[RMDB]
RNA sequence: GGGAACGACUCGAGUAGAGUCGAAAACUGUUGGGAGACCCUGGUCUGCACUCUGUCUGGAAACUUACAGAAGGGAGAGCAGGGCAGGGUUUCCCAUACAGAGAAAACGCAGGGGUUCGCCCCUGCGCAAGUUAAGUUGGUUCGCCAACUUAACUUGAAAAGAAACAACAACAACAAC
Reactivity to DMS in 0.01 (KOAc 150mM, MgCl2 10mM, bicine 150mM(pH8.5), 24C), signal-to-noise 3, nucleotides 027 to 126: c010u000g000u000u000g000g000g010a030g010a010c010c000c010u000g010g010u000c010u000g000c010a090c010u000c010u000g010u000c000u000g010g000a120a150a170c300u010u010a130c010a000g000a040a050g010g010g010a030g000a090g030c010a010g000g000g010c000a010g000g000g010u000u000u000c000c010c000a010u010a000c010a020g000a200g000a070a080a110a220c010g010c000a000g020g010g020g020u000u020c200g000c000c000c000c000u000g000c000g020
Chemical mapping of a 177-nucleotide RNA with DMS. The reactions ran in a buffer of 150 mM KOAc, 10 mM MgCl2 and 150 mM bicine (pH 8.5), at 24 C.